[RMDB]
RNA sequence: GGGAACGACUCGAGUAGAGUCGAAAAUAAGAGCAUGUACGAAUCACGAUAUGAGAGUUCCUGGUGAAUCCCGGGUACAAGGAAACGUAUUAAUCUCCCACUGCGUUCCCUUGCAGUAGGGAUAUAACACAUACGACAUGUUCGCAUGUCGUAUGUGAAAAGAAACAACAACAACAAC
Reactivity to 2A3 in 0.01 (KOAc 150mM, MgCl2 10mM, bicine 150mM(pH8.5), 24C), signal-to-noise 3, nucleotides 027 to 126: u210a040a030g040a030g100c120a090u150g030u050a010c030g030a050a040u050c060a020c120g050a070u080a100u300g100a110g000a000g050u040u010c000c000u030g060g000u050g090a130a020u040c030c000c000g010g000g000u050a030c010a030a000g060g000a060a030a000c020g010u010a030u060u150a130a060u020c030u010c060c000c000a000c000u000g000c000g000u040u020c020c000c000u020u060g000c010a000g030u130a150g040g020g000a010u020a010u000a040a000
Reactivity to DMS in 0.01 (KOAc 150mM, MgCl2 10mM, bicine 150mM(pH8.5), 24C), signal-to-noise 4, nucleotides 027 to 126: u020a080a090g010a120g020c130a040u010g020u000a050c050g000a060a120u000c040a090c060g000a150u000a090u000g010a130g000a260g000u000u000c000c000u000g000g010u000g010a120a100u010c130c010c000g000g010g040u000a030c020a060a040g010g000a010a060a080c030g020u000a030u010u000a070a070u010c110u000c010c010c000a050c080u000g000c000g000u000u000c010c000c020u010u000g010c020a040g010u000a080g020g000g010a030u000a010u010a070a130

The record gives the reactivity of an RNA of 177 nucleotides to 2A3 and DMS.
Values cover nucleotides 27 to 126.
For 2A3, 3,750 sequencing reads were counted.
Conditions: 150 mM KOAc, 10 mM MgCl2 and 150 mM bicine (pH 8.5), 24 C.
For 2A3 the reverse transcriptase was SuperScript II with manganese.
Values are in units of 0.01, from 0 to 300, in steps of 10.
In probing experiments dimethyl sulfate is read out at A N1 and C N3, which are open when not base-paired.